[RMDB]
RNA sequence: GGGAACGACUCGAGUAGAGUCGAAAACUACGUCGCGAUUUGGACGCCAGAACCAUGUUUGUUCAAAUCUUCGGUCCGCAAGGAGAGAAGCUCUUUGGCAAACACCUUCCUUUCAACUGGGGUGCGCCAAGCGCGUGCAUUUCGAUGCACGCGCUUGAAAAGAAACAACAACAACAAC
Reactivity to 2A3 in 0.01 (KOAc 150mM, MgCl2 10mM, bicine 150mM(pH8.5), 24C), signal-to-noise 3, nucleotides 027 to 126: c020u050a050c020g050u050c070g000c060g070a080u010u020u160g030g020a010c020g000c010c010a100g020a070a050c010c020a030u040g000u000u000u010g070u170u260c040a080a020a300u300c000u020u000c010g300g060u010c020c010g000c030a040a010g000g010a050g000a000g020a010a020g020c030u000c020u020u000u000g000g000c000a000a000a030c000a000c000c020u000u010c000c010u040u130u100c050a090a070c030u040g010g060g000g000u070g020c010g060c000
Reactivity to DMS in 0.01 (KOAc 150mM, MgCl2 10mM, bicine 150mM(pH8.5), 24C), signal-to-noise 1, nucleotides 027 to 126: c090u020a030c090g000u000c040g000c100g000a040u010u050u000g030g000a120c060g000c040c010a120g000a030a080c130c100a150u020g040u000u000u000g000u000u000c000a050a020a030u060c000u010u000c010g000g000u000c010c010g010c200a230a110g000g000a010g000a180g000a040a000g060c010u000c000u030u000u000g000g030c020a000a030a000c000a080c160c080u000u000c000c000u000u060u000c090a140a110c060u000g010g000g000g000u000g020c000g040c020
Chemical mapping of a 177-nucleotide RNA with 2A3 and DMS. For DMS, 1,348 sequencing reads were counted. The data come from the RNA Mapping Database (RMDB), library RFM100. The RNA was probed in 150 mM KOAc, 10 mM MgCl2 and 150 mM bicine (pH 8.5) at 24 C. For DMS the reverse transcriptase was MarathonRT.